Chemical mapping of a 177-nucleotide RNA with 2A3 and DMS. The reactions ran in a buffer of 150 mM KOAc, 10 mM MgCl2 and 150 mM bicine (pH 8.5), at 24 C. The 2A3 profile rests on 1,553 reads. The DMS profile rests on 3,128 reads.
RNA sequence: GGGAACGACUCGAGUAGAGUCGAAAAAAGGAAGGCAUAGGUCUCAUCAAUCAUGAAGCAACUGGUUCCGGCCUUCUUGAUCGCGUAGCCGGCGGCAUCGAGGCGGAUUGCCGUCACGUUGGCUCCAAGCGCCCAUAAAUUUCGAUUUAUGGGCGCUAAAAGAAACAACAACAACAAC
Reactivity to 2A3 in 0.01 (KOAc 150mM, MgCl2 10mM, bicine 150mM(pH8.5), 24C), signal-to-noise 3, nucleotides 027 to 126: a000a000g140g000a040a000g000g000c050a110u130a180g000g060u030c000u000c040a230u100c040a090a170u190c060a060u190g100a160a000g100c080a100a020c070u060g060g000u220u080c020c040g000g050c000c010u020u000c010u000u010g040a130u050c010g010c110g080u070a020g020c000c010g020g020c000g000g000c000a040u050c030g050a100g130g120c100g040g050a050u070u180g040c020c000g010u000c000a020c070g090u030u120g000g000c000u030c010c010a030
Reactivity to DMS in 0.01 (KOAc 150mM, MgCl2 10mM, bicine 150mM(pH8.5), 24C), signal-to-noise 2, nucleotides 027 to 126: a030a090g020g040a050a000g000g000c000a060u010a120g000g000u020c010u000c020a050u020c130a110a070u080c190a080u010g010a060a100g000c200a120a100c120u020g000g000u000u000c010c020g000g000c000c000u010u000c040u040u000g000a130u000c120g030c090g000u010a030g020c030c030g010g000c000g010g000c010a040u000c050g050a090g010g000c170g000g010a080u050u000g020c000c000g000u020c020a080c160g020u020u010g000g000c020u010c040c050a140